[RMDB]
RNA sequence: GGGAACGACUCGAGUAGAGUCGAAAAGAUAUGGACUGAUGCCUAAGUACGAAGAACUGAGAACUACGAGGGUCCUCGGAAACGAGGACACUCGCUCAGGGAGUACUUAGGCAUCAGUCCUAAGUCACAUCUGGUAUUUGUUCGCAAAUACCAGAUGAAAAGAAACAACAACAACAAC
Reactivity to DMS in 0.01 (KOAc 150mM, MgCl2 10mM, bicine 150mM(pH8.5), 24C), signal-to-noise 2, nucleotides 027 to 126: g020a050u000a300u010g000g000a030c000u010g000a010u000g010c010c000u010a010a010g010u010a000c000g040a170a240g010a160a200c000u010g000a020g030a200a090c140u040a300c020g000a000g000g000g000u000c000c000u000c010g010g000a050a070a140c000g000a030g000g020a010c000a000c000u000c000g000c010u010c010a000g000g020g000a170g000u000a020c000u000u010a020g000g010c010a000u000c000a000g030u010c000c000u000a020a070g000u000c040a240